Record summary:
Chemical mapping of a 177-nucleotide RNA with 2A3. The data come from the RNA Mapping Database (RMDB), library OK1LIB. Conditions: 150 mM KOAc, 10 mM MgCl2 and 150 mM bicine (pH 8.5), 24 C.

RNA sequence: GGGAACGACUCGAGUAGAGUCGAAAAAGAACAUCAAGAAAGGUUCACUACAGUCUUUUAGGAAUAAGAUAUCACAGAAAUCAUCAGUGAAUCUAGCCUUAAUGUGUGACAAUCAACUGGACAAGAAGUCGGUUCUUGAGUUCGCUCAAGAACCGACAAAAGAAACAACAACAACAAC
Reactivity to 2A3 in 0.01 (KOAc 150mM, MgCl2 10mM, bicine 150mM(pH8.5), 24C), signal-to-noise 1, nucleotides 027 to 126: a080g190a060a000c100a000u080c070a000a000g070a040a020a070g050g000u160u000c000a000c040u090a020c000a000g150u000c080u140u070u020u000a060g000g080a120a140u220a130a000g000a000u130a010u100c030a030c000a000g250a120a090a000u160c130a060u160c040a000g000u000g000a000a000u070c000u000a000g080c000c000u120u000a100a000u030g120u030g110u100g190a030c110a000a130u190c000a000a060c000u040g000g000a010c000a070a000g060a100a000